Chemical mapping of a 177-nucleotide RNA with 2A3 and DMS. The reactions ran in a buffer of 150 mM KOAc, 10 mM MgCl2 and 150 mM bicine (pH 8.5), at 24 C. It was measured as part of the RMDB library OK2TST. The 2A3 profile rests on 38,214 reads.
RNA sequence: GGGAACGACUCGAGUAGAGUCGAAAACAGGCAUGCCUUUGCUGGUGUUCUCUCGUGGUGACAGGUCACAGCCCCACCCUGUAAAAGGGGACUGAGAGACGUCGUCCUGCUGCUUCCCAGCAGCAGCACUUAUCCUAUCUUUCGAGAUAGGAUAAGUAAAAGAAACAACAACAACAAC
Reactivity to 2A3 in 0.01 (KOAc 150mM, MgCl2 10mM, bicine 150mM(pH8.5), 24C), signal-to-noise 9, nucleotides 027 to 126: c030a000g050g000c030a040u090g080c030c050u150u110u120g040c080u080g010g060u070g070u240u010c030u000c000u000c040g070u080g080g030u060g050a080c060a110g070g140u090c050a030c020a140g060c010c000c010c000a100c010c000c020u070g060u130a050a070a040a050g000g000g000g020a030c050u110g010a010g010a000g000a040c020g020u030c020g050u050c000c010u000g000c000u010g000c000u080u030c000c010c000a000g010c000a000g000c000a000g010c000
Reactivity to DMS in 0.01 (KOAc 150mM, MgCl2 10mM, bicine 150mM(pH8.5), 24C), signal-to-noise 9, nucleotides 027 to 126: c140a110g010g010c050a050u000g010c070c060u000u000u000g010c050u010g010g020u000g010u010u000c040u000c010u000c050g010u000g020g020u010g010a060c070a090g010g010u000c060a080c060a100g000c030c010c020c050a220c040c010c010u000g000u010a060a070a120a140g010g000g000g000a070c070u000g000a060g010a060g000a040c080g010u000c040g010u010c100c010u000g000c000u000g000c010u000u000c030c020c020a290g000c030a020g000c000a020g010c250